[RMDB]
RNA sequence: GGGAACGACUCGAGUAGAGUCGAAAAGUAACACGUGGCCAAACUACCCUCUGGAUCGGGAUAACCUCGGGAAACUGAGGCUAAUCCUGAAUAGCGUUCUCACCCUGGAGUGGGGAGAACGUGAAAUAAUACACUAUAUCUUCGGAUAUAGUGUAUUAAAAGAAACAACAACAACAAC
Reactivity to 2A3 in 0.01 (KOAc 150mM, MgCl2 10mM, bicine 150mM(pH8.5), 24C), signal-to-noise 9, nucleotides 027 to 126: g090u090a100a030c030a010c130g060u080g060g030c020c020a060a050a030c030u100a090c010c020c000u050c060u060g110g040a110u060c010g010g000g000a000u000a010a010c000c000u000c000g010g000g010a050a040a030c010u010g000a000g000g000c010u030a050a090u000c000c000u000g000a010a020u040a020g000c000g000u000u000c050u040c050a300c010c010c010u120g220g150a200g170u180g040g010g000g000a000g000a000a000c000g000u010g000a010a000a000u070
Reactivity to DMS in 0.01 (KOAc 150mM, MgCl2 10mM, bicine 150mM(pH8.5), 24C), signal-to-noise 9, nucleotides 027 to 126: g010u010a080a090c090a050c080g010u000g010g020c020c030a050a100a080c080u010a130c040c010c010u010c080u010g010g010a120u000c010g000g000g000a010u000a080a160c000c000u010c000g010g010g000a110a080a160c000u000g000a020g000g000c010u000a070a070u000c000c000u000g000a040a090u010a190g000c000g000u000u000c000u000c010a110c010c000c010u000g020g010a140g020u020g010g000g000g000a010g000a000a010c000g010u000g000a050a070a080u010